[RMDB]
RNA sequence: GGGAACGACUCGAGUAGAGUCGAAAAUUGACCGCAUGGGCCUGAUUUUCAGCAUCAGGUUGCAAUACAUAAUAUUGCGACGUCAACUGAGCAACAUUGAUCAAAUCGCUUUGCUGAGCAGCUUGCCCCAGGGGCUUAUGUUCGCAUAAGCCCCUGGAAAAGAAACAACAACAACAAC
Reactivity to 2A3 in 0.01 (KOAc 150mM, MgCl2 10mM, bicine 150mM(pH8.5), 24C), signal-to-noise 1, nucleotides 027 to 126: u020u040g040a020c020c000g060c040a080u050g050g010g000c000c010u030g020a010u060u030u040u130c020a030g040c020a130u030c010a050g000g000u000u030g000c010a030a020u080a040c060a130u250a210a060u050a090u050u000g000c000g020a020c010g060u120c040a030a040c030u040g030a010g110c000a040a100c040a090u050u200g050a030u120c060a020a120a060u060c030g060c040u050u090u100g000c050u000g020a010g000c040a010g000c000u040u160g030c010c040
Reactivity to DMS in 0.01 (KOAc 150mM, MgCl2 10mM, bicine 150mM(pH8.5), 24C), signal-to-noise 1, nucleotides 027 to 126: u000u000g010a120c060c050g000c190a120u010g010g000g020c010c020u000g000a050u000u000u000u010c140a060g000c140a070u000c060a060g000g000u020u000g000c000a030a020u010a020c130a130u000a140a300u000a040u000u000g000c000g020a060c030g000u000c060a020a190c060u000g000a040g000c070a090a070c060a080u020u030g000a050u000c060a040a150a100u000c140g020c080u000u020u010g030c060u010g000a050g000c100a000g000c060u000u020g010c030c030
An RNA of 177 nucleotides, treated with 2A3 and DMS and read out base by base. The 2A3 profile rests on 1,006 reads. The reactions ran in a buffer of 150 mM KOAc, 10 mM MgCl2 and 150 mM bicine (pH 8.5), at 24 C. As a SHAPE reagent, 2A3 marks flexible, mostly unpaired nucleotides at the ribose 2'-OH. The DMS profile rests on 964 reads.